[RMDB]
Description: Source: RMDB libraries RFM100 and RFMREP, as collected in RNAgym. Chemical mapping of a 177-nucleotide RNA with 2A3 and DMS. The reactions ran in a buffer of 150 mM KOAc, 10 mM MgCl2 and 150 mM bicine (pH 8.5), at 24 C. In probing experiments dimethyl sulfate is read out at A N1 and C N3, which are open when not base-paired. DMS adducts were read by reverse transcription with MarathonRT. 2A3 adducts were read by reverse transcription with SuperScript II with manganese.
RNA sequence: GGGAACGACUCGAGUAGAGUCGAAAAAGAGCUGAUACGUCAGCUCAAUACUGCAUCAGGAACUGAUUGGAUGAUAUUCAGGAGCCAUCAGUUCCUGAUGCACUCCCACACCGUCUACGGACGGUGACCAAUGGAUGAUGUUCGCAUCAUCCAUUGGAAAAGAAACAACAACAACAAC
Reactivity to 2A3 in 0.01 (KOAc 150mM, MgCl2 10mM, bicine 150mM(pH8.5), 24C), signal-to-noise 9, nucleotides 027 to 126: a010g000a000g000c000u000g010a010u020a050c240g120u000c010a000g000c000u000c000a000a010u060a030c040u020g000c000a000u000c000a000g000g000a000a000c010u010g020a050u190u210g050g020a070u100g070a060u140a200u300u240c130a120g180g090a050g090c000c000a000u000c000a000g000u000u000c000c000u000g000a000u000g000c000a000c000u000c000c000c000a010c010a000c000c000g010u000c000u010a030c170g110g000a000c000g000g000u000g000a020
Reactivity to DMS in 0.01 (KOAc 150mM, MgCl2 10mM, bicine 150mM(pH8.5), 24C), signal-to-noise 6, nucleotides 027 to 126: a140g000a010g010c000u000g010a040u010a060c220g030u000c000a000g000c000u000c000a030a050u020a080c290u000g000c000a010u000c000a010g010g000a000a000c000u010g000a020u010u020g030g000a040u020g000a190u030a110u020u050c270a150g030g020a140g000c010c010a020u000c000a000g000u000u000c000c000u000g000a000u000g010c000a010c180u000c000c000c000a240c020a000c000c000g000u000c000u000a140c180g030g000a000c000g000g010u000g000a090